The record gives the reactivity of an RNA of 207 nucleotides to 2A3 and DMS. It was measured as part of the RMDB library OK3TST. The RNA was probed in 150 mM KOAc, 10 mM MgCl2 and 150 mM bicine (pH 8.5) at 24 C. The 2A3 profile rests on 3,646 reads.

[RMDB]
RNA sequence: GGGAACGACUCGAGUAGAGUCGAAAAUCAGAGGAUCCUUCGACUAGCUGAAGCUCUGACUUCGAUCUCUCGAAGGAUCUCAGUCUCGACUUCCUAGUCCUGAAGCUUCCUCUUCAGAGAGGAAGUCCUGAGAGAGAUCUCUCGAUCCUGAAGGAUCCAGAAGUUAGUUCUUCGGAACUAACUUCUGAAAAGAAACAACAACAACAAC
Reactivity to 2A3 in 0.01 (KOAc 150mM, MgCl2 10mM, bicine 150mM(pH8.5), 24C), signal-to-noise 2, nucleotides 027 to 156: u040c010a010g020a030g040g040a110u150c020c020u020u020c030g110a160c100u170a080g060c140u120g030a010a010g010c010u020c040u100g090a100c010u010u000c020g060a070u020c020u010c010u030c060g020a060a050g000g000a000u000c000u000c000a030g050u000c010u010c040g010a010c000u040u010c010c020u060a060g120u100c040c010u010g010a030a010g010c030u150u060c030c030u050c000u010u020c020a030g050a000g000a000g100g000a000a000g000u000c030c080u090g000a010g010a010g000a000g010a030u010c040u000c000u010c060g030a060u030c010c010u080g100a130a050g060g020a020u040c030
Reactivity to DMS in 0.01 (KOAc 150mM, MgCl2 10mM, bicine 150mM(pH8.5), 24C), signal-to-noise 2, nucleotides 027 to 156: u000c020a100g010a110g010g010a030u000c010c000u000u000c010g020a150c090u010a080g010c050u020g000a080a110g020c030u000c060u000g000a050c020u000u000c030g000a040u000c010u010c040u030c040g020a120a090g010g000a020u010c020u100c040a060g020u010c030u000c020g000a040c010u000u010c010c040u010a100g010u010c100c020u000g000a050a080g020c150u000u010c180c080u000c000u000u000c060a100g010a180g020a040g000g010a010a000g010u000c010c030u010g000a140g000a230g020a130g000a070u000c010u000c020u000c010g000a020u000c010c010u000g000a140a080g000g000a060u000c020